[RMDB]
RNA sequence: GGGAACGACUCGAGUAGAGUCGAAAAUCAAGUAACCUUUGAUAACACUCAAAAUGCAUUAUUUGACAGCUUAUUCGAUGAGAAUCUUAAAUUUGUGGAAAUAAUUAGAUUCGACGAUGGUAAAGUUAACCUAUGUUAUCUAACUUCAGAGUUGAGACGUAAGUUUUCACUUCGGUGAAAACUUACGAAAAGAAACAACAACAACAAC
Reactivity to 2A3 in 0.01 (KOAc 150mM, MgCl2 10mM, bicine 150mM(pH8.5), 24C), signal-to-noise 1, nucleotides 027 to 156: u070c020a020a000g020u050a060a140c050c000u090u020u000g170a170u170a170a000c050a030c050u000c010a030a110a110a000u020g100c140a020u050u120a030u140u110u050g120a100c080a050g020c020u200u110a080u130u090c170g000a050u080g000a120g000a140a000u000c000u020u090a150a190a220u180u110u110g070u170g050g050a110a220a000u030a000a080u150u000a000g020a070u000u030c020g000a000c000g070a100u050g040g030u120a180a040a110g050u120u030a070a070c000c030u030a000u160g070u020u000a020u040c000u030a030a070c070u070u050c100a000g000a020g060u020u000g000a000g020a000